Structure probing data (2A3) for a 207-nucleotide construct.
The data come from the RNA Mapping Database (RMDB), library M2RFPK.
For 2A3, 476 sequencing reads were counted.
For 2A3 the reverse transcriptase was SuperScript II with manganese.
[RMDB]
RNA sequence: GGGAACGACUCGAGUAGAGUCGAAAAAUCUUUAAGCAGAUGGCAGGUUCACUCCGUACGGUGCGGAAGUUCGCGCUUCCGUGAAACGCGAAAAUCGGACGGUGGCUGCAAGUCGCAUCGCAAAACCUAUAGCUUGUUAGGUUCGCCUAACAAGCAACAUACUUCGGGUCUUCGGACCCGAAGUAUGAAAAGAAACAACAACAACAAC
Reactivity to 2A3 in 0.01 (KOAc 150mM, MgCl2 10mM, bicine 150mM(pH8.5), 24C), signal-to-noise 1, nucleotides 027 to 156: a000u140c060u060u130u040a120a040g060c060a040g000a090u060g060g030c020a010g070g080u200u160c000a000c110u000c050c000g000u030a000c040g000g040u050g010c000g010g010a010a010g000u040u260c140g020c040g010c060u000u000c010c030g010u020g060a050a060a000c200g010c000g120a140a000a000a070u110c000g010g010a000c070g040g000u030g040g040c050u060g040c040a000a060g070u040c030g000c060a000u010c020g000c040a010a040a060a090c000c010u090a060u060a190g000c000u010u000g010u000u000a000g000g000u040u070c210g040c090c000u020a000a000c000a000a000g010c010a000a000